[RMDB]
RNA sequence: GGGAACGACUCGAGUAGAGUCGAAAACGGCCUGGCUUCGGCCAGGCCGAAAGAUGCAUUUUACGCCAAGAAAUCCCGGAACUUUGGCCCGGAAGCCUGAGAAAAGAGUACUGUUCGCAGUACUCAAGAUACUGAACAUGUUCGCAUGUUCAGUAUCAAAAGAAACAACAACAACAAC
Reactivity to 2A3 in 0.01 (KOAc 150mM, MgCl2 10mM, bicine 150mM(pH8.5), 24C), signal-to-noise 2, nucleotides 027 to 126: c020g010g010c000c000u030g010g020c020u040u040c180g080g000c020c000a000g020g000c020c000g000a020a000a000g000a010u070g000c000a020u020u010u040u180a070c050g020c010c000a050a030g070a090a180a010u040c000c020c020g020g080a120a100c050u070u050u060g000g010c000c010c050g040g100a050a030g020c000c030u040g040a050g080a020a140a020a040g010a000g000u000a000c010u020g050u090u100c250g000c100a020g020u030a010c000u000c000a000a000
Reactivity to DMS in 0.01 (KOAc 150mM, MgCl2 10mM, bicine 150mM(pH8.5), 24C), signal-to-noise 2, nucleotides 027 to 126: c020g020g020c010c000u000g010g030c020u000u010c190g020g000c020c010a000g010g010c010c000g000a010a040a050g000a090u000g010c060a080u000u000u000u000a080c110g020c000c060a050a120g000a100a130a130u000c020c010c030g020g000a110a090c110u000u000u000g000g000c030c050c100g000g000a100a100g010c040c030u000g000a050g000a070a060a100a190g000a020g030u010a000c000u000g020u000u010c180g030c020a000g010u010a000c000u000c000a020a040